[RMDB]
RNA sequence: GGGAACGACUCGAGUAGAGUCGAAAAAAAUCAUGAAUACCCAAAGGAAUUCUUUUGACACCCUCUUAUUCAUGAGUGGAAUUAGCCACGGCUUGUGUUUUAACAUUUGGAACUACCCUGGUGUCUGCUAAGAUGAGCGAUUCGUCGCUCAUCUUAGAAAAGAAACAACAACAACAAC
Reactivity to DMS in 0.01 (KOAc 150mM, MgCl2 10mM, bicine 150mM(pH8.5), 24C), signal-to-noise 1, nucleotides 027 to 126: a130a070a110u000c000a000u000g000a060a030u010a100c110c030c020a060a050a140g000g010a090a110u000u000c030u010u010u010u000g000a070c100a060c040c010c110u000c080u010u000a030u000u000c010a020u000g000a040g010u000g020g010a060a060u000u000a120g050c040c010a010c040g010g010c110u000u040g020u000g020u000u000u000u000a100a070c050a070u010u010u010g010g030a070a030c130u000a110c060c030c010u020g020g020u000g000u010c070u000g010
Record summary: An RNA of 177 nucleotides, treated with DMS and read out base by base. High DMS reactivity at an A or C suggests that its Watson-Crick edge is free. For DMS, 780 sequencing reads were counted. DMS adducts were read by reverse transcription with MarathonRT.